[RMDB]
RNA sequence: GGGAACGACUCGAGUAGAGUCGAAAAGCUCUGGAAGUGAGGCCCCUCUAACAAUAAUCCAAAACUACUUCGCAGAGUAAUCUGCCGAAUCGUAGGAUGCCCAUUACUAUCUAUUUUUGGAGCAUCUAAAACUGUCAGUGCUUCGGCACUGACAGAACAAAAAUGUAUUGUUCGCAAUACAUUUUUGAAAAGAAACAACAACAACAAC
Reactivity to 2A3 in 0.01 (KOAc 150mM, MgCl2 10mM, bicine 150mM(pH8.5), 24C), signal-to-noise 3, nucleotides 027 to 156: g000c000u000c010u020g030g010a060a050g080u050g100a030g050g170c000c020c020c010u060c100u120a100a070c060a040a110u220a040a080u090c060c040a070a040a030a030c010u040a010c000u010u010c040g000c110a000g000a000g000u030a010a080u010c020u040g050c030c020g040a030a050u060c050g010u030a060g070g000a000u000g000c010c020c000a020u050u040a040c020u060a080u210c030u040a180u150u070u000u010u020g000g000a080g010c000a000u000c010u040a020a030a040a100c000u000g000u000c000a010g010u010g000c000u050u090c130g040g000c000a000c000u000g000a000c000a000g000a010a000
Reactivity to DMS in 0.01 (KOAc 150mM, MgCl2 10mM, bicine 150mM(pH8.5), 24C), signal-to-noise 2, nucleotides 027 to 156: g050c000u000c010u000g010g000a090a090g030u010g010a060g030g000c030c020c000c010u010c040u000a190a170c050a080a060u000a080a120u000c050c050a050a090a160a300c030u000a060c030u010u010c050g000c010a030g000a020g020u000a130a090u000c020u000g000c000c020g020a060a040u000c070g010u000a210g000g000a070u000g010c000c010c010a080u010u010a050c110u000a150u020c090u000a180u000u000u000u000u000g020g000a110g000c010a020u000c020u000a060a050a100a110c000u000g000u000c010a030g050u000g000c000u000u000c300g060g030c000a010c000u000g010a000c000a000g000a050a110